Chemical mapping of a 177-nucleotide RNA with DMS. Values are in units of 0.01, from 0 to 300, in steps of 10.
[RMDB]
RNA sequence: GGGAACGACUCGAGUAGAGUCGAAAAUGGACCGCACGAGUUCAUUGAAGGCCGUAGGCAGCACGCUCUUCACACGCGUGUCGGCAAUGUACUGCGCAGUUACGGCAAGGCGCUUGCUUGUAAGGAAGCGGGUUUUAAUAUUCGUAUUAAAACCCGCAAAAGAAACAACAACAACAAC
Reactivity to DMS in 0.01 (KOAc 150mM, MgCl2 10mM, bicine 150mM(pH8.5), 24C), signal-to-noise 2, nucleotides 027 to 126: u000g000g000a010c000c030g000c220a130c260g000a110g010u010u000c010a010u000u000g000a100a110g030g020c030c000g010u000a080g000g000c020a130g000c000a010c020g000c030u000c100u000u010c190a070c160a100c260g000c060g020u000g010u000c140g000g020c010a140a100u000g000u010a080c050u000g000c050g000c060a100g010u000u000a010c050g000g010c000a120a030g010g000c090g010c060u000u000g000c030u000u000g010u020a060a100g020g010a070a110

Reactivities are given for positions 27 through 126. The reactions ran in a buffer of 150 mM KOAc, 10 mM MgCl2 and 150 mM bicine (pH 8.5), at 24 C.